[RMDB]
RNA sequence: GGGAACGACUCGAGUAGAGUCGAAAAGAUAUGGAUAGGAGGAGUCGGUACUCGGAAACGAGUAUUCGACGCGAAACUCCCAUCCUAAGUCAAAACCGAUAAAGAAAGUUCGCUUUCUUUAUCGGAAGUUACUACUGUACUUCGGUACAGUAGUAACAAAAGAAACAACAACAACAAC
Reactivity to DMS in 0.01 (KOAc 150mM, MgCl2 10mM, bicine 150mM(pH8.5), 24C), signal-to-noise 4, nucleotides 027 to 126: g000a060u000a300u000g000g010a010u000a040g000g010a020g020g010a140g010u000c000g010g000u000a000c000u000c010g000g000a070a070a190c010g010a010g000u000a000u000u010c010g010a000c000g010c170g010a090a100a240c000u000c000c000c030a010u000c000c000u010a050a120g010u000c040a100a100a120a200c000c000g010a010u000a000a020a000g000a020a000a010g010u000u010c280g010c010u010u000u000c000u000u000u000a000u000c010g000g000a010a020
Reactivity to 2A3 in 0.01 (KOAc 150mM, MgCl2 10mM, bicine 150mM(pH8.5), 24C), signal-to-noise 4, nucleotides 027 to 126: g000a000u060a020u100g000g000a010u010a030g010g010a010g040g030a080g020u010c000g000g010u000a010c000u000c010g000g010a060a070a020c010g010a000g020u010a010u200u300c010g000a000c000g000c010g030a050a030a020c000u000c010c000c010a000u010c000c000u010a140a040g040u030c010a000a000a090a150c000c000g000a000u000a010a010a010g010a000a000a010g030u080u210c260g070c150u010u010u000c000u010u000u000a010u000c000g000g000a000a000

The data come from the RNA Mapping Database (RMDB), library TTRDEL. An RNA of 177 nucleotides, treated with DMS and 2A3 and read out base by base. For 2A3 the reverse transcriptase was SuperScript II with manganese. For DMS, 5,125 sequencing reads were counted. Values cover nucleotides 27 to 126. For DMS the reverse transcriptase was MarathonRT.